[RMDB]
RNA sequence: GGGAACGACUCGAGUAGAGUCGAAAAGAAGAGCAGUCAGAUAAUCUUGUGCAGAAUGAAUGCUCGUAACUUCAUGGCACAAGUAGAUGUAGAUAACUUUAAUCUCACAUAGCGGAGGAGCCGCAGACGGCACCACUCAUUUCGAUGAGUGGUGCCGAAAAGAAACAACAACAACAAC
Reactivity to 2A3 in 0.01 (KOAc 150mM, MgCl2 10mM, bicine 150mM(pH8.5), 24C), signal-to-noise 1, nucleotides 027 to 126: g150a000a000g110a000g070c110a000g010u010c000a000g130a170u190a060a140u130c000u000u000g010u010g000c010a030g100a300a000u010g000a000a000u030g000c000u050c110g280u070a000a000c020u020u030c000a000u000g050g010c000a000c000a000a000g010u020a030g000a100u060g060u080a010g020a130u020a030a000c000u140u060u100a090a050u000c000u000c000a070c000a000u090a080g060c210g000g000a100g030g130a020g080c000c000g030c000a010g010a030
Reactivity to DMS in 0.01 (KOAc 150mM, MgCl2 10mM, bicine 150mM(pH8.5), 24C), signal-to-noise 1, nucleotides 027 to 126: g000a010a040g010a120g000c120a110g000u020c000a120g000a160u000a150a240u010c000u000u020g000u000g000c050a100g000a080a000u000g000a010a000u010g010c050u030c300g000u000a140a210c060u000u020c010a000u000g000g000c000a000c000a000a000g030u050a090g000a060u000g000u000a000g000a020u000a060a090c230u000u050u030a090a000u000c080u020c040a010c220a090u010a110g000c030g000g000a140g000g000a230g020c000c000g000c090a020g000a050